RNA sequence: GGGAACGACUCGAGUAGAGUCGAAAAGAGCAUCAAAUUUUAGGUUAGAAAUCAUUUUCCUUCAGAAGUUUGAACACAUUGUUCCAUUGUCUUCUAGUUUUUUGGGCAUUGUUGAGUAGUCCACAGCCAUUUUAAUUUGUGACCCAUUGUCUAUGACAUGAACUAGGAGUUUCGACUCCUAGUUCAUAAAAGAAACAACAACAACAAC
Reactivity to DMS in 0.01 (KOAc 150mM, MgCl2 10mM, bicine 150mM(pH8.5), 24C), signal-to-noise 2, nucleotides 027 to 156: g020a100g030c040a280u020c020a050a090a070u010u010u000u000a080g010g040u000u000a040g030a080a050a100u010c080a160u000u000u000u000c000c000u010u010c040a140g000a060a090g020u000u000u010g000a050a110c030a100c050a140u010u000g010u000u010c030c010a160u000u010g010u000c040u010u000c050u010a100g010u000u000u000u000u000u000g010g010g000c030a150u000u000g010u020u000g000a150g020u000a140g010u000c000c030a060c050a060g010c020c010a010u010u000u010u000a010a060u000u000u000g010u000g010a080c040c020c020a260u000u000g010u000c010u000a120u040g020a190c170
Reactivity to 2A3 in 0.01 (KOAc 150mM, MgCl2 10mM, bicine 150mM(pH8.5), 24C), signal-to-noise 2, nucleotides 027 to 156: g000a010g040c070a040u160c000a020a070a100u070u130u140u190a040g000g070u070u060a070g050a040a240a090u070c020a050u000u120u110u110c020c000u050u040c050a120g010a180a020g030u030u100u080g040a040a010c020a010c040a190u090u180g040u050u050c020c010a020u020u110g050u080c030u060u020c010u060a080g050u020u040u060u010u070u080g030g020g000c040a040u020u060g090u090u060g060a050g040u100a020g030u000c010c010a010c000a000g000c000c000a010u000u010u010u010a030a030u000u020u000g020u030g030a060c050c040c030a050u070u090g030u070c050u180a120u230g050a020c010